Chemical mapping of a 177-nucleotide RNA with 2A3 and DMS.
RNA sequence: GGGAACGACUCGAGUAGAGUCGAAAACGCGUGGCACUAUCACUAUCUUCAUCACACGUGGCUUGGACUUGAGGACCCUCAGUAUAUCGCGUGCGUCAUCCACCAGGCGCCUGACAUACUGGAAGGCGGAGGGCGCGAAAUUCGUUUCGCGCCCUCCAAAAGAAACAACAACAACAAC
Reactivity to 2A3 in 0.01 (KOAc 150mM, MgCl2 10mM, bicine 150mM(pH8.5), 24C), signal-to-noise 1, nucleotides 027 to 126: c060g000c000g010u060g000g050c110a020c050u110a070u210c020a100c120u100a110u120c090u130u070c090a130u110c030a020c000a010c060g010u040g040g040c010u000u030g020g060a030c000u030u050g000a010g030g040a080c010c000c000u000c010a000g000u000a020u000a010u060c010g010c010g130u140g040c000g000u030c000a120u060c020c050a040c010c000a020g020g000c000g000c000c000u020g000a000c000a000u000a020c000u000g000g100a090a020g100g050c050
Reactivity to DMS in 0.01 (KOAc 150mM, MgCl2 10mM, bicine 150mM(pH8.5), 24C), signal-to-noise 1, nucleotides 027 to 126: c050g070c070g020u000g000g000c150a070c070u000a070u000c070a090c100u030a100u030c020u000u010c090a040u010c060a040c060a120c050g000u000g010g000c070u010u020g010g000a050c000u000u020g000a100g000g010a130c080c030c070u030c000a000g000u000a000u000a030u000c000g010c180g000u010g070c070g010u000c030a080u010c050c040a050c060c050a050g000g020c010g000c000c020u020g040a040c040a000u000a000c020u000g000g010a050a040g010g000c160
For 2A3, 1,359 sequencing reads were counted. The reactions ran in a buffer of 150 mM KOAc, 10 mM MgCl2 and 150 mM bicine (pH 8.5), at 24 C. It was measured as part of the RMDB library OK2TST. DMS (dimethyl sulfate) methylates the pairing face of unpaired adenines and cytosines.